[RMDB]
RNA sequence: GGGAACGACUCGAGUAGAGUCGAAAACGUAGUCAAGACACUACUACGGGCACUAGUGUCUUGAGUGCCACCGUUCUAUCGGUACGGUGGACAUGCGAAAGCAUGUCCAUCGUACUGAUAGAACGGAGCACCUUGUUGGGUUCGCCCAACAAGGUGCAAAAGAAACAACAACAACAAC
Reactivity to DMS in 0.01 (KOAc 150mM, MgCl2 10mM, bicine 150mM(pH8.5), 24C), signal-to-noise 1, nucleotides 027 to 126: c140g010u000a040g010u010c030a000a000g000a020c040a000c010u000a020c120u010a160c090g020g010g000c050a070c160u010a010g000u000g000u000c000u000u000g000a010g020u000g010c010c220a160c000c000g000u010u020c050u000a000u000c000g000g000u000a010c010g010g010u000g010g000a020c000a000u000g000c010g000a190a090a200g000c000a000u010g000u000c000c000a000u000c000g000u000a000c000u000g000a000u000a000g000a000a000c000g010g000a060
Reactivity to 2A3 in 0.01 (KOAc 150mM, MgCl2 10mM, bicine 150mM(pH8.5), 24C), signal-to-noise 1, nucleotides 027 to 126: c040g020u040a030g190u050c010a000a000g000a010c000a010c020u020a010c040u100a080c100g040g050g000c050a010c080u020a000g010u010g010u000c000u000u010g010a030g010u040g040c020c020a070c010c000g000u010u010c000u000a000u010c000g010g000u000a010c000g020g000u000g000g010a000c000a010u000g010c020g070a140a000a000g010c000a000u000g000u000c000c000a000u000c000g000u000a000c010u000g000a000u000a000g000a000a000c000g010g000a000
Notes
Chemical mapping of a 177-nucleotide RNA with DMS and 2A3. DMS adducts were read by reverse transcription with MarathonRT. For 2A3 the reverse transcriptase was SuperScript II with manganese. Conditions: 150 mM KOAc, 10 mM MgCl2 and 150 mM bicine (pH 8.5), 24 C.